[RMDB]
RNA sequence: GGGAACGACUCGAGUAGAGUCGAAAACGCAGUCGCUUCGGCGACUGCGAAAGAUAGCACGAAAAAGGGAAUAAAUAAUGGGUAACGUGCACCCACCAAUAAAAACGUCAGCGUUCGCGCUGACGAACCAUCAAUACCAGUUCGCUGGUAUUGAUGGAAAAGAAACAACAACAACAAC
Reactivity to DMS in 0.01 (KOAc 150mM, MgCl2 10mM, bicine 150mM(pH8.5), 24C), signal-to-noise 3, nucleotides 027 to 126: c030g020c000a010g020u000c000g030c020u000u000c190g040g070c010g010a020c020u010g010c010g010a020a050a100g010a120u030a080g000c000a040c000g000a020a050a070a110a120g010g000g010a140a070u020a050a120a040u000a110a080u010g010g000g010u000a100a090c020g000u010g000c020a140c010c010c000a060c240c110a050a090u000a010a040a100a060a100c000g010u000c000a010g010c000g020u010u010c170g020c000g020c000u000g000a000c000g000a040a060
Reactivity to 2A3 in 0.01 (KOAc 150mM, MgCl2 10mM, bicine 150mM(pH8.5), 24C), signal-to-noise 5, nucleotides 027 to 126: c010g030c000a010g000u000c010g050c070u140u150c300g120g000c010g000a010c000u020g000c000g000a000a000a000g010a020u100a010g010c000a010c020g210a050a000a020a080a080g120g030g080a150a120u200a200a170a060u240a090a130u150g040g000g000u020a070a010c010g000u010g000c000a000c010c000c000a010c020c010a050a090u210a130a060a020a010a010c010g000u000c000a000g000c000g020u050u070c160g000c010g000c050u000g000a000c000g000a000a020

Record summary:
The record gives the reactivity of an RNA of 177 nucleotides to DMS and 2A3. For 2A3, 8,448 sequencing reads were counted. The DMS profile rests on 2,521 reads. Conditions: 150 mM KOAc, 10 mM MgCl2 and 150 mM bicine (pH 8.5), 24 C. For DMS the reverse transcriptase was MarathonRT.